[RMDB]
RNA sequence: GGGAACGACUCGAGUAGAGUCGAAAAGAGGUAGUCUUAUACAGCAAGAUCUGUGAAACUUUUUUGAGAUGUUGUACAGAGUUUAGUAGAUCAGGAAUUAAACUGGUAAAGGUGAGACACUGCGACACCAACUUAUCAAUAAAACUGCCAUCAAAUAUGCUGGUAAUCAAUUCGUUGAUUACCAGCAAAAAGAAACAACAACAACAAC
Reactivity to 2A3 in 0.01 (KOAc 150mM, MgCl2 10mM, bicine 150mM(pH8.5), 24C), signal-to-noise 1, nucleotides 027 to 156: g040a000g000g020u010a000g000u000c000u000u080a030u020a070c050a000g010c060a160a100g000a060u000c010u000g010u160g030a030a050a130c070u200u120u110u020u140u290g080a180g040a040u110g060u060u170g000u020a050c080a000g010a000g060u000u050u000a010g000u060a000g000a070u050c000a000g000g030a110a010u070u060a140a030a000c010u010g000g010u120a070a140a150g010g010u050g060a000g010a030c040a010c150u150g000c030g030a040c000a000c010c000a000a040c020u030u080a030u030c020a010a000u100a100a090a020a040c030u070g040c010c000a070u090c000a030a040a170u040a040
Reactivity to DMS in 0.01 (KOAc 150mM, MgCl2 10mM, bicine 150mM(pH8.5), 24C), signal-to-noise 1, nucleotides 027 to 156: g010a140g000g080u000a030g030u010c030u000u020a160u010a040c030a080g000c030a140a180g020a060u000c010u000g020u030g000a200a020a130c000u000u000u000u000u060u000g000a260g000a050u020g030u030u000g020u000a100c100a120g010a090g010u000u000u000a130g020u030a040g020a080u010c040a150g010g020a130a110u020u000a050a070a110c040u000g000g010u030a010a090a090g050g020u000g000a120g020a090c100a090c100u000g020c010g030a090c110a030c010c010a020a150c070u000u010a090u000c020a030a070u000a030a030a020a050c030u000g000c010c010a090u000c050a040a020a110u000a080

An RNA of 207 nucleotides, treated with 2A3 and DMS and read out base by base. For 2A3, 457 sequencing reads were counted. The data come from the RNA Mapping Database (RMDB), library OK3TST.